[RMDB]
An RNA of 177 nucleotides, treated with DMS and 2A3 and read out base by base.
It was measured as part of the RMDB library TTRDEL.
2A3 is a SHAPE reagent: it acylates the 2'-hydroxyl of flexible nucleotides of all four kinds.
Values cover nucleotides 27 to 126.
For DMS, 641 sequencing reads were counted.
RNA sequence: GGGAACGACUCGAGUAGAGUCGAAAAUAACUUCGCAGAUAUGGACAUGAACUACGCUGAACUGAGUCGUUGAAAUCGGAAACGAUGGAGACUCAUAGUAGGCGCAUGUCCUAAGUCACUCCACAAACGUAUCUGCAAUCUUCGGAUUGCAGAUACGAAAAGAAACAACAACAACAAC
Reactivity to DMS in 0.01 (KOAc 150mM, MgCl2 10mM, bicine 150mM(pH8.5), 24C), signal-to-noise 1, nucleotides 027 to 126: u000a070a210c100u020u000c080g070c150a110g020a050u010a300u000g020g000a000c000a010u000g010a080a060c100u000a270c020g000c010u010g020a110a140c180u000g000a010g020u000c000g000u020u000g020a120a160a020u000c010g020g010a070a040a110c000g000a050u000g000g010a050g000a000c010u000c020a020u000a040g010u000a110g040g000c000g010c020a000u000g000u000c000c000u000a000a060g020u020c040a120c130u000c050c030a060c180a100a040a100
Reactivity to 2A3 in 0.01 (KOAc 150mM, MgCl2 10mM, bicine 150mM(pH8.5), 24C), signal-to-noise 1, nucleotides 027 to 126: u110a020a120c070u150u140c140g070c300a030g010a160u110a030u110g010g000a010c000a050u020g000a120a180c160u130a080c300g000c000u010g020a010a000c010u000g000a000g000u000c040g170u300u060g020a040a040a000u020c010g020g010a070a080a050c000g000a000u000g030g000a040g020a010c000u000c000a000u020a010g010u000a000g000g000c010g000c020a000u010g020u040c010c000u010a030a000g000u020c020a030c080u040c030c000a160c090a040a210a030